[RMDB]
RNA sequence: GGGAACGACUCGAGUAGAGUCGAAAAGCCUCUAGCGUUUGCAAAACGCUGUUUGCGCAAUGAUCUGCAUUUAGCGCAAGUAGGUCCGAAAUCCAGAUCAACAUUUCGGACAACCGCGCUAAUUAAAUCCUCUCUGAUUUUUCGAAAUCAGAGAGGAAAAAGAAACAACAACAACAAC
Reactivity to DMS in 0.01 (KOAc 150mM, MgCl2 10mM, bicine 150mM(pH8.5), 24C), signal-to-noise 4, nucleotides 027 to 126: g000c010c020u000c090u010a020g030c000g000u000u010u010g030c300a130a070a040a010c000g010c010u000g000u010u000u000g010c070g030c050a080a100u010g000a120u010c070u000g000c070a060u000u000u000a010g000c000g010c010a070a130g010u010a100g020g020u000c010c010g000a000a010a010u000c150c110a170g000a150u000c170a070a100c210a060u000u000u000c010g010g000a030c000a060a020c140c150g020c010g010c010u010a000a020u010u010a050a090a130
Reactivity to 2A3 in 0.01 (KOAc 150mM, MgCl2 10mM, bicine 150mM(pH8.5), 24C), signal-to-noise 2, nucleotides 027 to 126: g040c020c000u000c050u050a010g000c000g000u000u080u190g160c050a130a190a000a000c010g020c010u020g040u050u150u030g080c070g000c030a090a140u240g090a110u080c040u130g040c040a060u020u020u030a000g000c010g000c010a000a030g100u110a050g100g070u000c000c000g030a000a000a000u030c080c040a070g030a300u100c010a020a110c010a060u010u000u000c010g000g000a000c010a010a000c020c040g000c000g000c000u010a020a000u030u090a030a020a040